[RMDB]
RNA sequence: GGGAACGACUCGAGUAGAGUCGAAAAGAUAUGGACCACAUUAUCGGUAAUACAGUAAGUCUCGGAAACGAGACACUGUGGCAGAUGGAUGUGGUCCUAAGUCAAAAGUGCGUCUUCGGACGCACAACCUUAGACGAUUGUUCGCAAUCGUCUAAGGAAAAGAAACAACAACAACAAC
Reactivity to DMS in 0.01 (KOAc 150mM, MgCl2 10mM, bicine 150mM(pH8.5), 24C), signal-to-noise 3, nucleotides 027 to 126: g010a050u000a300u000g000g010a020c000c000a000c020a020u000u000a020u000c010g010g040u020a120a150u000a020c000a000g030u000a090a120g020u000c000u000c010g000g000a100a100a190c000g000a010g000a010c020a030c010u000g010u010g030g020c100a090g000a020u000g000g010a000u000g020u000g020g030u000c000c020u000a010a060g030u010c040a120a070a120a130g010u000g020c010g000u000c000u000u010c220g000g000a010c000g010c010a000c000a050a080
Reactivity to 2A3 in 0.01 (KOAc 150mM, MgCl2 10mM, bicine 150mM(pH8.5), 24C), signal-to-noise 3, nucleotides 027 to 126: g040a000u090a030u190g000g020a010c010c010a010c010a020u000u020a040u080c020g040g050u190a250a080u270a260c010a000g060u240a300a020g000u080c000u000c010g000g060a110a070a050c000g010a010g070a000c010a000c000u010g010u020g100g030c060a070g010a060u100g120g000a000u000g010u000g060g000u000c000c000u000a000a000g000u010c010a000a000a010a080g000u000g000c010g010u000c010u040u090c260g130g000a000c010g060c010a010c000a010a010